RNA sequence: GGGAACGACUCGAGUAGAGUCGAAAACCUCCUACCUUCGGGUAGGAGGAAAGCACGCGCAACGUAAGCGACAAGCAAGUCAACGCGAACGAACGUAAUUAAAAACGCAGGGCUUCGGCCCUGCGAACAAAUGCGUAAGGUUCGCCUUACGCAUUUGAAAAGAAACAACAACAACAAC
Reactivity to 2A3 in 0.01 (KOAc 150mM, MgCl2 10mM, bicine 150mM(pH8.5), 24C), signal-to-noise 3, nucleotides 027 to 126: c000c000u000c000c000u010a010c000c010u040u070c260g150g000g000u000a000g000g000a010g000g010a020a000a000g020c010a020c080g090c020g010c030a110a070c070g060u100a070a070g010c000g090a100c060a060a050g120c040a120a030g070u090c050a060a070c050g000c000g040a080a010c040g010a020a010c040g040u130a070a170u090u150a070a130a030a050a010c000g000c000a010g010g010g000c010u040u120c190g050g000c000c000c000u000g000c000g000a000a000
Reactivity to DMS in 0.01 (KOAc 150mM, MgCl2 10mM, bicine 150mM(pH8.5), 24C), signal-to-noise 4, nucleotides 027 to 126: c000c000u010c000c000u000a000c000c000u000u010c150g010g000g030u000a000g010g000a010g010g000a020a020a110g020c110a080c110g000c020g010c090a090a080c050g020u000a080a110g000c050g010a090c120a060a130g030c120a090a080g000u000c060a050a070c070g010c010g000a140a060c040g010a090a060c050g020u000a090a120u010u020a040a070a050a130a130c030g010c000a000g000g010g020c000u000u010c170g020g000c000c000c000u030g000c000g000a020a060

Structure probing data (2A3 and DMS) for a 177-nucleotide construct. For DMS, 3,034 sequencing reads were counted. Conditions: 150 mM KOAc, 10 mM MgCl2 and 150 mM bicine (pH 8.5), 24 C. For 2A3, 3,817 sequencing reads were counted.